[RMDB]
RNA sequence: GGGAACGACUCGAGUAGAGUCGAAAAACUAGUAUGUACACGAUGAGACUGCCGUGUCGUCUAGACUGCGGAUCCAAUAAUCUCAGAUCUGCGAGAUAUUGUCUCAAGAGUACGAGACAAGUACUCAGUGUAUGCACUACUUCGGUGGUGUAUACACAAAAGAAACAACAACAACAAC
Reactivity to 2A3 in 0.01 (KOAc 150mM, MgCl2 10mM, bicine 150mM(pH8.5), 24C), signal-to-noise 9, nucleotides 027 to 126: a000c010u020a010g070u150a040u040g110u110a010c010a000c020g050a060u160g040a030g100a100c090u120g130c090c000g000u000g000u010c000g000u000c010u010a030g040a120c030u040g000c000g010g000a000u000c020c020a060a060u160a150a120u100c080u030c120a020g000a040u000c000u010g010c040g050a020g010a020u220a060u070u110g020u000c000u000c020a040a030g090a020g120u080a040c070g010a010g040a070c050a050a020g030u020a030c000u000c030a010
Reactivity to DMS in 0.01 (KOAc 150mM, MgCl2 10mM, bicine 150mM(pH8.5), 24C), signal-to-noise 9, nucleotides 027 to 126: a120c020u000a010g010u050a010u000g010u050a020c010a020c010g010a110u020g010a120g010a110c110u030g000c070c010g010u000g010u000c010g000u000c010u000a020g000a140c090u010g000c010g000g000a010u000c020c140a080a090u030a100a090u030c110u000c160a140g000a020u000c020u010g000c020g000a070g000a100u020a060u010u010g000u000c010u000c010a080a100g000a080g010u020a030c060g000a090g000a060c150a040a060g000u010a060c010u000c010a150